[RMDB]
RNA sequence: GGGAACGACUCGAGUAGAGUCGAAAAGAGGGCCAUGCCACCGGCAUCCUCGAACGGGAAGAGUUCGACCAGGAACGGAUCAUGAGCCUGGCGACGAAGCUAUUCCAUUGAUGUGUAGGAGGACGUAACAUCCCACCCGAUUCGUCGGGUGGGAUGUAAAAGAAACAACAACAACAAC
Reactivity to DMS in 0.01 (KOAc 150mM, MgCl2 10mM, bicine 150mM(pH8.5), 24C), signal-to-noise 2, nucleotides 027 to 126: g000a070g000g000g020c000c100a040u020g010c030c010a120c100c120g020g020c040a060u010c010c030u010c030g010a110a090c130g010g000g010a030a010g010a040g000u000u010c000g000a170c000c040a000g000g010a070a090c050g010g000a110u000c170a130u010g000a130g000c020c000u000g000g020c020g000a050c040g000a040a020g020c030u010a050u000u000c010c010a250u000u000g010a050u010g030u010g030u060a060g010g000a060g020g010a030c200g010u010a090
Reactivity to 2A3 in 0.01 (KOAc 150mM, MgCl2 10mM, bicine 150mM(pH8.5), 24C), signal-to-noise 1, nucleotides 027 to 126: g030a010g000g020g000c040c030a020u060g040c030c030a230c050c100g010g010c020a030u020c000c000u010c040g000a070a010c040g060g030g060a080a000g060a000g100u000u020c040g100a180c050c010a000g010g000a080a030c060g050g100a080u120c060a120u190g000a010g020c000c000u000g000g070c030g030a070c020g010a030a010g060c030u070a060u100u000c040c000a000u040u220g050a090u090g110u040g040u100a020g010g080a020g030g030a000c050g000u010a000
Chemical mapping of a 177-nucleotide RNA with DMS and 2A3. DMS adducts were read by reverse transcription with MarathonRT.